[RMDB]
RNA sequence: GGGAACGACUCGAGUAGAGUCGAAAAGGGAGCAUAAAAGAAAGAGCAGUACUUAGUUUUACCCUGGGAUUGCUCACUCUGCAAGAGGAGAAUGUGCACAGAUGCAAGUGUAUGCUCUCACACUAGCCUGCCCUGGCUCUGCCUUCUUCUGCUCCCACCUAGUAACAACAUUCGUGUUGUUACUAGGAAAAGAAACAACAACAACAAC
Reactivity to 2A3 in 0.01 (KOAc 150mM, MgCl2 10mM, bicine 150mM(pH8.5), 24C), signal-to-noise 9, nucleotides 027 to 156: g010g000g000a020g010c040a040u140a110a150a020a010g080a050a070a030g030a020g000c010a010g010u080a180c060u090u130a060g110u150u140u190u270a100c030c010c040u040g000g020g000a060u060u070g000c000u000c020a040c040u060c030u070g100c120a110a060g020a050g120g030a010g020a040a090u110g040u080g040c040a020c020a080g110a050u200g070c050a090a080g000u000g010u020a050u120g060c020u020c010u070c050a030c010a000c040u040a020g010c010c030u050g020c020c010c020u020g030g000c020u000c010u020g000c000c000u010u000c000u020u000c020u030g000c000u000c000c000c000a000
Reactivity to DMS in 0.01 (KOAc 150mM, MgCl2 10mM, bicine 150mM(pH8.5), 24C), signal-to-noise 2, nucleotides 027 to 156: g020g010g020a040g070c010a100u020a050a080a100a060g020a080a080a150g000a060g000c010a020g030u000a040c040u000u000a070g030u000u030u000u000a100c120c110c020u020g000g000g000a070u000u010g010c010u000c020a230c040u000c010u010g010c050a120a130g000a240g000g000a030g010a050a070u000g030u010g010c030a100c010a040g010a140u000g020c120a050a060g010u010g020u000a040u000g000c060u000c100u000c050a110c080a060c050u010a180g030c040c060u000g000c030c030c040u000g020g020c030u000c060u000g000c090c060u000u000c020u000u000c060u000g020c010u000c020c010c020a090
An RNA of 207 nucleotides, treated with 2A3 and DMS and read out base by base.
DMS adducts were read by reverse transcription with MarathonRT.
It was measured as part of the RMDB library OK3TST.
2A3 adducts were read by reverse transcription with SuperScript II with manganese.